[RMDB]
RNA sequence: GGGAACGACUCGAGUAGAGUCGAAAAUCUAACUCAUUCGUGAGUUAGAGUGAGCGCAGCGACCAUUGGGCCGCUGGCGCGCUGUCGGUGCCGCGCGUGGCGAUAGUGCUUGCUUCGGCAAGCACAAAAUCCGUUUGGAUUUCGAUCCAAACGGAUUAAAAGAAACAACAACAACAAC
Reactivity to DMS in 0.01 (KOAc 150mM, MgCl2 10mM, bicine 150mM(pH8.5), 24C), signal-to-noise 2, nucleotides 027 to 126: u000c000u000a000a020c000u000c000a020u000u020c190g030u000g000a010g010u000u000a000g010a030g010u000g010a110g020c010g040c010a030g010c010g000a030c000c010a300u010u000g030g020g030c010c000g030c000u000g030g020c010g010c010g000c080u000g000u000c060g000g020u000g010c030c020g020c120g020c110g000u010g000g030c030g000a060u000a090g020u010g000c000u000u000g000c010u000u000c200g020g010c000a010a000g020c000a000c000a020a040
Reactivity to 2A3 in 0.01 (KOAc 150mM, MgCl2 10mM, bicine 150mM(pH8.5), 24C), signal-to-noise 1, nucleotides 027 to 126: u000c000u000a000a030c000u000c000a000u090u060c140g150u050g050a010g000u000u000a020g000a020g040u110g070a040g040c040g020c020a010g000c010g010a010c010c010a170u130u280g130g030g000c030c030g000c040u040g070g030c000g050c010g010c020u080g070u130c030g060g170u160g030c030c010g120c020g010c050g070u070g060g060c010g000a020u100a120g000u020g000c000u000u000g000c000u010u020c040g050g000c000a020a000g000c000a010c000a000a000

An RNA of 177 nucleotides, treated with DMS and 2A3 and read out base by base. High DMS reactivity at an A or C suggests that its Watson-Crick edge is free. The 2A3 profile rests on 1,409 reads. Source: RMDB library M2PK50, as collected in RNAgym. For 2A3 the reverse transcriptase was SuperScript II with manganese.